[RMDB]
RNA sequence: GGGAACGACUCGAGUAGAGUCGAAAAGAUAUGGACUUUGAGUACAGGGAGCAACUGCUCGGAAACGAGCAGAAUUGCGAAGAACUGUAUGUAAGAGUCCUAAGUCAAAGGGACCUUCGGGUCCCAACGAACACAAAUACUUCGGUAUUUGUGUUCGAAAAGAAACAACAACAACAAC
Reactivity to DMS in 0.01 (KOAc 150mM, MgCl2 10mM, bicine 150mM(pH8.5), 24C), signal-to-noise 2, nucleotides 027 to 126: g000a100u010a300u020g020g010a020c000u000u000u010g000a300g020u010a010c020a020g050g030g020a080g000c000a000a030c010u000g000c000u000c000g000g010a040a040a140c000g010a030g000c000a000g000a050a090u000u010g000c010g010a070a300g000a110a280c000u000g000u000a000u000g000u030a290a110g010a000g010u000c000c010u000a030a060g000u010c050a110a120a080g020g000g000a020c000c010u010u000c180g080g000g000u000c000c000c010a010a050
Reactivity to 2A3 in 0.01 (KOAc 150mM, MgCl2 10mM, bicine 150mM(pH8.5), 24C), signal-to-noise 1, nucleotides 027 to 126: g030a050u060a050u130g010g000a000c010u010u100u160g080a020g050u000a010c010a000g000g000g040a020g020c000a000a030c020u000g000c000u000c000g000g040a070a040a010c000g010a000g000c000a000g000a070a120u040u000g000c030g110a220a050g010a030a010c020u000g030u050a000u080g170u120a100a050g020a000g090u040c000c000u000a090a020g020u020c030a040a080a160g030g000g000a000c010c000u080u080c280g180g000g000u000c010c010c000a000a030